This 177-nucleotide RNA was probed chemically with 2A3 and DMS.
[RMDB]
RNA sequence: GGGAACGACUCGAGUAGAGUCGAAAAGUGCUCCUGGCCUCGGCGGCGAAGACAGCAUCUUCAUGGGCGUCCAGUCCUACGGCGACACCGCGCUCGACUACUACAACGUCCGGCUGAUGGGCGGUACGUACCGGAUGCAGUUCGCUGCAUCCGGUACAAAAGAAACAACAACAACAAC
Reactivity to 2A3 in 0.01 (KOAc 150mM, MgCl2 10mM, bicine 150mM(pH8.5), 24C), signal-to-noise 1, nucleotides 027 to 126: g070u070g040c020u050c030c000u040g050g000c000c020u070c050g050g010c000g000g010c010g030a040a030g040a040c050a040g000c010a080u000c030u060u030c000a090u030g050g030g030c050g020u040c040c050a000g020u070c010c000u020a040c060g020g020c010g060a010c000a020c020c070g010c000g010c050u020c030g100a040c030u150a070c020u050a050c040a120a020c040g020u000c000c000g060g000c050u070g010a090u090g040g010g060c020g000g030u090a040c070
Reactivity to DMS in 0.01 (KOAc 150mM, MgCl2 10mM, bicine 150mM(pH8.5), 24C), signal-to-noise 2, nucleotides 027 to 126: g000u000g000c060u000c010c020u030g040g030c050c020u000c070g010g000c050g000g010c060g010a070a050g000a060c110a080g010c010a300u020c020u000u000c130a130u010g020g000g030c010g040u010c060c040a080g010u000c040c010u020a090c230g000g020c070g000a080c080a050c080c080g000c030g030c070u000c040g030a080c040u010a050c090u010a050c110a050a150c060g020u000c020c030g010g000c080u000g020a150u000g000g010g010c000g000g020u010a040c110

Source: RMDB library OK2TRN, as collected in RNAgym. Conditions: 150 mM KOAc, 10 mM MgCl2 and 150 mM bicine (pH 8.5), 24 C.